Conditions: 150 mM KOAc, 10 mM MgCl2 and 150 mM bicine (pH 8.5), 24 C.
The record gives the reactivity of an RNA of 177 nucleotides to 2A3.
Reactivities are given for positions 27 through 126.
For 2A3, 459 sequencing reads were counted.
[RMDB]
RNA sequence: GGGAACGACUCGAGUAGAGUCGAAAAUCGCCUUGCUGCGGAUGUCAGCGAUCUGCGCGUCGGUGACCGGUUGAUGGUUGCUGGUCUGGAUCACCAGUGUCAGCGGAUUGGUGCGGUAUCCGGGGAAUCGCGGGUACCUCUUCGGAGGUACCCGCGAAAAAGAAACAACAACAACAAC
Reactivity to 2A3 in 0.01 (KOAc 150mM, MgCl2 10mM, bicine 150mM(pH8.5), 24C), signal-to-noise 1, nucleotides 027 to 126: u050c080g000c140c000u080u150g070c040u090g010c030g080g000a010u120g120u220c000a030g020c000g000a000u000c040u040g000c010g000c020g090u160c070g030g000u000g030a010c000c000g140g020u070u080g000a120u050g000g070u020u270g030c080u020g000g030u000c000u010g100g040a140u240c000a030c180c000a000g000u000g040u180c040a000g000c000g030g000a000u080u040g030g060u070g000c010g000g000u000a000u000c000c000g000g000g000g030a050a040